[RMDB]
RNA sequence: GGGAACGACUCGAGUAGAGUCGAAAAGAUAUGGACUACGUGCUGCGAAGAUUCCGUGAACUACGUGGGUGGUCGGAAACGACCACGAUUCACGCACGGAGAUCUUCGCAGCACGUAGUCCUAAGUCCUACGUGCUUAAGUUCGCUUAAGCACGUAGAAAAGAAACAACAACAACAAC
Reactivity to DMS in 0.01 (KOAc 150mM, MgCl2 10mM, bicine 150mM(pH8.5), 24C), signal-to-noise 1, nucleotides 027 to 126: g020a090u020a300u000g020g020a080c000u010a000c000g040u000g010c000u000g010c000g030a040a020g030a010u000u000c040c000g000u000g000a080a100c180u010a300c020g000u000g030g000g060u000g000g020u010c000g000g010a110a150a200c000g000a030c000c010a020c000g010a110u010u010c000a000c000g040c000a000c000g000g000a080g000a010u010c000u000u000c010g030c000a010g000c020a000c000g000u010a000g000u010c000c000u000a000a080g020u000c050